Structure probing data (DMS) for a 177-nucleotide construct. The DMS profile rests on 2,183 reads.
RNA sequence: GGGAACGACUCGAGUAGAGUCGAAAAGAUAUGGAUGCCCUAGACAUGAAGAGUCGGAAACGACGCUUCAACAGCUAGGCAUCCUAAGUCAAAGAGUGACUGCACCGUUCGCGGUGCAGUCACUCAACCAUCCAUAUCUGUUCGCAGAUAUGGAUGGAAAAGAAACAACAACAACAAC
Reactivity to DMS in 0.01 (KOAc 150mM, MgCl2 10mM, bicine 150mM(pH8.5), 24C), signal-to-noise 2, nucleotides 027 to 126: g010a030u000a280u010g010g000a020u010g000c180c020c030u000a000g010a040c070a270u000g000a010a000g010a040g010u000c000g000g010a060a030a160c000g020a010c010g000c000u000u010c020a010a060c250a200g000c010u000a000g000g000c000a000u000c010c000u000a000a070g000u000c030a100a110a120g000a030g010u000g000a010c020u000g000c000a010c000c000g060u000u000c190g020c000g000g000u000g010c000a000g000u010c020a000c010u000c000a000a120

The reactions ran in a buffer of 150 mM KOAc, 10 mM MgCl2 and 150 mM bicine (pH 8.5), at 24 C. It was measured as part of the RMDB library TTRDEL.